[RMDB]
RNA sequence: GGGAACGACUCGAGUAGAGUCGAAAAGAUAUGGAUCGGAUGAUGGAGCUACUCGGAAACGAGAAUAGCUAUGAAGUCGCACGAUCCUAAGUCAUAAUCUAAUGGUGCCUUCGGGCACCAUUAGAAACAUAUCAUUAGCGUUCGCGCUAAUGAUAUGAAAAGAAACAACAACAACAAC
Reactivity to 2A3 in 0.01 (KOAc 150mM, MgCl2 10mM, bicine 150mM(pH8.5), 24C), signal-to-noise 5, nucleotides 027 to 126: g010a000u050a020u130g000g010a010u010c010g030g010a040u040g000a010u050g160g060a010g010c000u010a010c000u010c010g010g030a090a040a020c030g000a010g030a220a300u070a020g000c010u020a300u150g150a110a040g000u000c010g010c040a050c030g000a000u000c000c000u000a020a000g000u000c040a010u130a300a150u030c010u000a000a000u010g000g010u000g000c020c010u060u070c300g030g000g010c010a010c000c000a000u000u000a000g000a010a000a000
Reactivity to DMS in 0.01 (KOAc 150mM, MgCl2 10mM, bicine 150mM(pH8.5), 24C), signal-to-noise 9, nucleotides 027 to 126: g000a040u000a300u010g010g010a010u000c010g010g000a100u010g000a020u000g010g010a020g020c000u000a050c010u000c000g000g000a080a090a140c010g000a010g010a090a110u010a010g010c000u000a170u010g010a130a220g000u000c000g020c300a130c010g010a010u000c000c000u000a010a090g010u000c040a090u010a080a100u000c000u000a000a010u000g000g020u000g000c000c000u000u000c200g020g000g020c000a000c000c000a000u000u000a000g000a010a070a210

About this RNA:
This 177-nucleotide RNA was probed chemically with 2A3 and DMS. 2A3 adducts were read by reverse transcription with SuperScript II with manganese. For 2A3, 12,728 sequencing reads were counted. Values are in units of 0.01, from 0 to 300, in steps of 10.